RNA sequence: GGGAACGACUCGAGUAGAGUCGAAAACAGACUCUGACACAGUCACAGAGACACACUGUGAGUGUCACACAGUGUGUCACACAGUGACUCAGUGUGUGUCACACUCUGACUGUGACUCUCUCAGAGACCACCCCUAGUAAUUCGUUACUAGGGGUGGAAAAGAAACAACAACAACAAC
Reactivity to 2A3 in 0.01 (KOAc 150mM, MgCl2 10mM, bicine 150mM(pH8.5), 24C), signal-to-noise 7, nucleotides 027 to 126: c020a010g110a090c000u010c010u020g010a000c000a000c000a050g010u020c000a000c010a010g070a010g010a030c010a000c010a010c100u070g030u040g130a080g100u150g120u120c040a010c000a000c000a050g050u000g000u000g000u010c000a010c000a000c000a010g050u030g040a020c000u020c040a130g050u030g030u040g010u020g030u120c010a000c000a010c020u070c050u070g100a110c010u000g020u010g020a020c010u010c000u000c000u000c040a010g000a000g010a020
Reactivity to DMS in 0.01 (KOAc 150mM, MgCl2 10mM, bicine 150mM(pH8.5), 24C), signal-to-noise 5, nucleotides 027 to 126: c080a170g020a180c030u000c030u010g020a030c060a070c100a030g000u000c010a020c030a020g010a170g010a050c070a040c050a030c060u000g010u010g000a110g010u000g010u010c100a130c020a030c030a020g000u000g010u000g010u000c000a010c050a090c120a060g000u000g000a060c040u010c070a090g000u000g020u000g020u000g000u010c050a010c010a080c070u000c060u000g000a170c040u000g000u000g000a040c020u000c080u020c220u000c020a020g000a020g000a240